Background: This 177-nucleotide RNA was probed chemically with DMS. For DMS, 787 sequencing reads were counted. The RNA was probed in 150 mM KOAc, 10 mM MgCl2 and 150 mM bicine (pH 8.5) at 24 C.

RNA sequence: GGGAACGACUCGAGUAGAGUCGAAAAGAUAUGGAAGAAGAACUACGCUCCGAAGAUCAACAGCGACUGCGAAUGUCGGAAACGACAUUCGCAGUCGACAUGAUUGUAGAGCGCUUCUUCCUAAGUCCGGUAUAAGUACGUUCGCGUACUUAUACCGAAAAGAAACAACAACAACAAC
Reactivity to DMS in 0.01 (KOAc 150mM, MgCl2 10mM, bicine 150mM(pH8.5), 24C), signal-to-noise 1, nucleotides 027 to 126: g000a060u000a300u040g000g050a030a030g000a030a010g000a180a100c150u000a300c090g010c000u000c010c050g000a130a230g010a000u000c000a040a170c300a270g020c020g000a070c000u020g010c000g000a080a010u020g020u000c000g000g010a050a080a150c040g020a000c000a030u000u040c030g020c000a000g010u010c000g030a030c100a080u000g020a010u000u000g010u000a190g020a040g000c040g000c040u000u010c000u000u000c000c000u000a020a130g000u000c030